Description:
Source: RMDB libraries RFM100 and RFMREP, as collected in RNAgym. Structure probing data (2A3 and DMS) for a 177-nucleotide construct. The RNA was probed in 150 mM KOAc, 10 mM MgCl2 and 150 mM bicine (pH 8.5) at 24 C. Reactivities are given for positions 27 through 126.
RNA sequence: GGGAACGACUCGAGUAGAGUCGAAAAGUCAUCUAAUUACAGGAAAUCCGCAUAAAUUAGAUGAAAUGGAAAGUAAUAAGUAAUAAUUUAUUGAUAAGCGCCUAUGUGAUGGUAAAUCAUGACAUAGAUGCAUAUCAUAGUUCGCUAUGAUAUGCAUAAAAGAAACAACAACAACAAC
Reactivity to 2A3 in 0.01 (KOAc 150mM, MgCl2 10mM, bicine 150mM(pH8.5), 24C), signal-to-noise 8, nucleotides 027 to 126: g050u010c000a000u000c000u000a010a000u020u050a060c080a080g040g050a160a200a150u100c030c020g050c050a080u180a150a090a000u010u000a000g000a000u000g010a050a020a030u090g030g050a120a070a040g080u100a040a140u090a090a030g080u020a020a140u060a120a180u160u120u160a110u080u070g030a030u040a180a070g050c040g020c050c010u000a010u010g020u010g090a010u010g010g050u040a040a050a090u250c010a010u000g020a010c000a000u020a010g040
Reactivity to DMS in 0.01 (KOAc 150mM, MgCl2 10mM, bicine 150mM(pH8.5), 24C), signal-to-noise 6, nucleotides 027 to 126: g010u000c000a000u010c000u000a010a010u000u000a120c240a180g020g010a170a130a140u020c050c020g030c140a110u020a080a020a020u000u000a000g000a010u000g000a010a070a060u030g000g000a070a070a140g010u010a030a030u000a020a060g000u010a110a110u030a070a070u020u010u020a030u020u000g000a090u010a090a100g010c130g000c150c000u010a000u000g000u000g000a010u000g000g010u010a050a050a140u070c000a000u010g000a000c000a010u000a010g000